The record gives the reactivity of an RNA of 177 nucleotides to DMS and 2A3. Source: RMDB library OK1LIB, as collected in RNAgym. 2A3 adducts were read by reverse transcription with SuperScript II with manganese. Values cover nucleotides 27 to 126. For DMS the reverse transcriptase was MarathonRT.
RNA sequence: GGGAACGACUCGAGUAGAGUCGAAAAACUAUGAUCACUCAGAUGUUUUCAUUACUGCAACGUCAAAAGAAGUUGAUGAACUGAUAGAAAGCCAAUGUGAAGUCAUUGCAUUGGAUGCAACGUUACACCUACAAUGCUGGUUCGCCAGCAUUGUAGGAAAAGAAACAACAACAACAAC
Reactivity to DMS in 0.01 (KOAc 150mM, MgCl2 10mM, bicine 150mM(pH8.5), 24C), signal-to-noise 3, nucleotides 027 to 126: a060c130u000a050u000g000a040u060c100a010c040u000c090a110g010a080u010g000u000u030u020u010c060a030u000u040a060c130u010g010c150a040a040c070g000u000c110a070a050a060a060g010a050a090g010u000u000g000a080u020g020a030a030c060u010g000a130u050a080g000a110a090a120g000c040c000a000a000u000g000u010g000a050a110g010u050c180a090u000u000g000c010a050u000u000g000g000a090u020g000c160a030a080c040g010u000u020a030c160a180
Reactivity to 2A3 in 0.01 (KOAc 150mM, MgCl2 10mM, bicine 150mM(pH8.5), 24C), signal-to-noise 5, nucleotides 027 to 126: a000c130u110a120u150g070a060u050c060a020c090u090c030a060g030a190u140g050u000u020u080u110c050a040u020u180a070c060u050g080c020a050a060c060g020u070c090a000a010a060a100g150a130a020g060u130u070g040a080u040g030a100a070c040u050g010a070u040a170g090a110a120a000g020c020c000a000a000u010g010u010g050a050a040g110u180c050a240u020u180g020c000a000u000u040g000g030a030u070g010c040a050a000c020g020u050u030a020c080a020

The 2A3 profile rests on 2,520 reads.